[RMDB]
RNA sequence: GGGAACGACUCGAGUAGAGUCGAAAAAAGACGUUCCAUAUCCUAAGCAAUCUAUUUUUACUAUUAAUAGUGUGGUCCAAAAGGAUGGUGUUGAAAACACUCCUCCUCACUAUUUUACUCUUGGAUGCCAUUAUAAUAAGUUCGCUUAUUAUAAUGGAAAAGAAACAACAACAACAAC
Reactivity to DMS in 0.01 (KOAc 150mM, MgCl2 10mM, bicine 150mM(pH8.5), 24C), signal-to-noise 3, nucleotides 027 to 126: a080a070g010a160c060g020u000u000c020c010a080u000a050u010c010c010u000a120a120g000c050a080a070u010c050u000a020u010u010u000u010u010a140c030u010a130u000u010a010a020u000a020g020u010g000u000g010g000u020c170c090a050a050a070a030g000g010a070u010g030g020u000g010u010u000g010a140a100a110a100c010a030c030u000c010c010u000c000c000u010c010a010c010u000a010u000u000u000u010a080c130u000c050u000u010g010g010a100u000g010
Reactivity to 2A3 in 0.01 (KOAc 150mM, MgCl2 10mM, bicine 150mM(pH8.5), 24C), signal-to-noise 5, nucleotides 027 to 126: a000a000g070a010c020g010u020u000c010c000a020u030a030u060c000c010u050a050a010g030c020a040a080u020c010u080a240u090u110u040u120u080a140c050u060a070u300u080a000a010u000a020g010u000g010u000g000g050u080c090c050a070a070a060a000g010g000a020u110g060g060u010g050u020u060g140a110a110a030a000c010a000c000u010c000c000u000c010c000u000c020a000c000u000a000u020u020u010u030a060c010u020c020u040u040g060g040a040u050g040
Chemical mapping of a 177-nucleotide RNA with DMS and 2A3. The RNA was probed in 150 mM KOAc, 10 mM MgCl2 and 150 mM bicine (pH 8.5) at 24 C. Values cover nucleotides 27 to 126.